[RMDB]
This 177-nucleotide RNA was probed chemically with 2A3 and DMS.
For 2A3 the reverse transcriptase was SuperScript II with manganese.

RNA sequence: GGGAACGACUCGAGUAGAGUCGAAAAGUGAGAAUGUUCGCAUUCUCACAAAUAAAUUCAGCGGUUUAAAUUAGCUCCGCAUAACCGCUGAUGCGGAGCUAUAAAGCUUGCCGUUCGCGGCAAGCAAUCGUUACUUAGAGUUCGCUCUAAGUAACGAAAAAGAAACAACAACAACAAC
Reactivity to 2A3 in 0.01 (KOAc 150mM, MgCl2 10mM, bicine 150mM(pH8.5), 24C), signal-to-noise 3, nucleotides 027 to 126: g010u000g000a000g000a000a010u010g000u070u110c140g000c110a000u000u000c000u010c000a000c000a000a000a000u010a000a000a040u080u030c020a020g030c040g090g130u030u120u270a050a160a100u130u040a090g010c000u000c000c000g000c010a000u030a050a040c040c010g000c080u040g010a000u020g010c000g000g000a000g020c000u010a000u030a020a040a000g010c000u010u010g000c000c000g020u020u030c220g000c010g060g010c000a000a000g000c000a000a020
Reactivity to DMS in 0.01 (KOAc 150mM, MgCl2 10mM, bicine 150mM(pH8.5), 24C), signal-to-noise 2, nucleotides 027 to 126: g020u000g000a010g010a020a010u000g020u000u010c200g020c010a000u000u000c000u000c000a010c000a030a070a070u010a050a080a130u010u000c040a050g000c040g000g000u000u010u010a060a100a120u000u000a010g000c000u000c000c000g000c000a030u000a080a070c070c030g010c060u000g000a020u000g000c010g000g000a010g000c010u000a010u010a040a100a120g000c000u000u000g000c020c000g030u000u000c190g020c020g000g000c000a000a000g010c020a030a030

The RNA was probed in 150 mM KOAc, 10 mM MgCl2 and 150 mM bicine (pH 8.5) at 24 C. For 2A3, 4,938 sequencing reads were counted.